Source information
This 177-nucleotide RNA was probed chemically with DMS and 2A3. For 2A3 the reverse transcriptase was SuperScript II with manganese.

[RMDB]
RNA sequence: GGGAACGACUCGAGUAGAGUCGAAAAUGCUGGAUGGUCACGUUGGAGACUGCAUGUGGCAGUCUUGAAACGUGUGGUUUGACGUCUAUCCAUUAUGGCAGUGGGUGGAGUACUGCAAAGAUGUCACGCCAGUUGAUCAGUUCGCUGAUCAACUGGCAAAAGAAACAACAACAACAAC
Reactivity to DMS in 0.01 (KOAc 150mM, MgCl2 10mM, bicine 150mM(pH8.5), 24C), signal-to-noise 2, nucleotides 027 to 126: u010g010c280u000g000g000a100u010g010g010u000c020a000c010g020u000u010g020g010a030g010a000c000u000g010c010a270u010g010u010g010g020c010a000g000u000c020u000u010g000a070a020a010c010g040u010g020u000g000g000u000u000u000g030a040c000g050u000c010u000a140u020c050c030a110u000u020a060u010g020g010c010a010g000u010g000g000g000u000g000g000a220g010u000a070c030u010g000c040a010a050a180g010a000u000g000u010c010a180c300
Reactivity to 2A3 in 0.01 (KOAc 150mM, MgCl2 10mM, bicine 150mM(pH8.5), 24C), signal-to-noise 3, nucleotides 027 to 126: u080g020c080u080g000g060a090u080g150g110u120c010a000c000g020u000u010g040g000a010g000a000c000u000g020c000a100u280g110u130g300g000c000a000g010u000c000u000u040g050a100a010a000c000g000u000g000u010g020g000u000u000u100g010a000c000g010u000c010u030a200u030c030c010a000u220u140a060u130g000g030c000a010g000u010g010g020g110u300g030g040a220g030u120a010c010u000g010c000a000a000a000g030a010u030g010u030c010a000c040

Reactivities are given for positions 27 through 126.